Structure probing data (2A3 and DMS) for a 177-nucleotide construct. Reactivities are given for positions 27 through 126. DMS adducts were read by reverse transcription with MarathonRT. Reactivities are rounded to 0.1 and cut off at 0 and 3. Conditions: 150 mM KOAc, 10 mM MgCl2 and 150 mM bicine (pH 8.5), 24 C. Source: RMDB library OK2TRN, as collected in RNAgym.

[RMDB]
RNA sequence: GGGAACGACUCGAGUAGAGUCGAAAAUGUGAGCAUGACGCAAAUGUAGCAUCAAUUUUUUUUAUGUCCUAAAUUUGAUAUUGCAAUGAGGACUGUAGUAGGUUGUGACCAAGUCUGCCUCACUACAGAAUUGAAAUGGAUUCGUCCAUUUCAAUUCAAAAGAAACAACAACAACAAC
Reactivity to 2A3 in 0.01 (KOAc 150mM, MgCl2 10mM, bicine 150mM(pH8.5), 24C), signal-to-noise 7, nucleotides 027 to 126: u100g020u010g010a040g020c020a030u110g030a020c040g000c100a020a070a110u130g020u050a030g010c010a010u040c020a050a070u070u020u010u010u040u020u100u160a100u140g010u000c010c000u080a150a180a180u110u070u050g060a050u110a110u290u280g070c030a030a040u080g020a030g020g000a000c020u020g020u010a040g010u010a020g020g050u030u130g080u100g060a030c040c040a080a020g020u000c000u020g010c010c010u000c020a010c000u020a020c000a020
Reactivity to DMS in 0.01 (KOAc 150mM, MgCl2 10mM, bicine 150mM(pH8.5), 24C), signal-to-noise 9, nucleotides 027 to 126: u000g020u010g010a060g010c030a040u010g010a040c060g010c140a070a090a100u010g000u000a150g010c030a040u000c030a020a000u000u000u000u010u010u000u010u010a060u010g010u000c030c010u000a060a050a070u000u000u000g010a130u010a100u000u010g020c040a040a050u000g010a070g000g010a070c020u000g000u000a030g010u000a030g000g010u000u010g020u000g000a110c100c150a060a140g010u000c010u000g000c090c010u000c080a010c010u000a060c120a080